An RNA of 207 nucleotides, treated with 2A3 and DMS and read out base by base. The RNA was probed in 150 mM KOAc, 10 mM MgCl2 and 150 mM bicine (pH 8.5) at 24 C. It was measured as part of the RMDB library OK3TST.
RNA sequence: GGGAACGACUCGAGUAGAGUCGAAAACGGUGGUGUUGCCAUCGUGACGUACUACCCGAGGCCUGAAGAGGUCAGCACACUACGGUGCACCGACGACGAGCACGAGUGCGUUCACGACUGGCGCAUCCUCUGGGGCAACGUCGAACGGACGGUGGUCACGAAUAGAUGCUUUCGAGCAUCUAUUCGUAAAAGAAACAACAACAACAAC
Reactivity to 2A3 in 0.01 (KOAc 150mM, MgCl2 10mM, bicine 150mM(pH8.5), 24C), signal-to-noise 5, nucleotides 027 to 156: c030g010g040u090g000g010u020g000u060u300g010c000c000a010u000c000g000u000g000a000c000g000u000a010c010u080a120c000c050c060g100a210g030g040c030c040u110g040a090a050g040a020g070g020u060c120a030g030c010a010c020a010c070u300a120c180g160g000u000g000c020a040c000c050g160a200c000g010a030c030g000a030g010c010a010c040g020a000g010u000g000c000g070u160u120c020a010c010g000a010c110u030g000g000c000g000c010a030u040c010c010u010c030u080g030g000g010g030c030a080a040c010g010u030c010g130a190a170c080g140g040a020c020g010g070u060g010g040u040c010
Reactivity to DMS in 0.01 (KOAc 150mM, MgCl2 10mM, bicine 150mM(pH8.5), 24C), signal-to-noise 2, nucleotides 027 to 156: c070g060g010u000g010g060u010g030u010u010g050c000c000a050u000c010g020u020g040a110c040g020u000a070c010u000a050c070c020c020g020a140g030g000c010c020u000g020a080a130g000a100g010g030u010c020a110g010c030a040c030a120c070u010a160c220g080g000u020g020c030a140c030c000g000a110c060g000a280c060g000a070g070c050a160c020g000a020g060u010g000c000g000u000u000c010a030c060g000a080c120u030g040g040c000g030c020a060u000c000c030u000c030u020g010g000g040g050c010a060a070c010g010u000c000g000a070a070c080g030g000a080c030g010g010u000g010g000u000c070
For 2A3, 3,769 sequencing reads were counted. 2A3 adducts were read by reverse transcription with SuperScript II with manganese.